[RMDB]
RNA sequence: GGGAACGACUCGAGUAGAGUCGAAAACGAGACGCCAGCGCCCUGCUGGUACGAACCCCGCGGGUCCUCCGAGGACACCGCAGCCAAAGACCAGCAGGUCGACGGCUAUUGGUACUACGUCGCCCUCGGGACCCCGCUGACCGCCGCGUCGGUCGUCGAUCCACCAUACUUUCGAGUAUGGUGGAUCAAAAGAAACAACAACAACAAC
Reactivity to 2A3 in 0.01 (KOAc 150mM, MgCl2 10mM, bicine 150mM(pH8.5), 24C), signal-to-noise 3, nucleotides 027 to 156: c010g020a030g030a040c120g000c000c000a000g070c000g060c050c020c070u070g040c010u020g000g000u040a010c040g030a030a040c010c010c010c030g020c030g000g010g000u000c040c050u150c040c110g050a180g020g020a010c050a090c060c020g000c040a010g020c010c030a110a130a000g020a030c000c000a030g160c050a050g030g000u000c000g010a010c010g000g030c000u030a090u020u150g010g000u060a120c050u030a110c190g190u110c110g050c010c000c000u000c000g030g010g020a020c030c030c000c000g010c020u030g000a000c020c000g070c020c030g160c060g090u280c000g090g000u030c010g040u100c050

Background: Conditions: 150 mM KOAc, 10 mM MgCl2 and 150 mM bicine (pH 8.5), 24 C. Chemical mapping of a 207-nucleotide RNA with 2A3.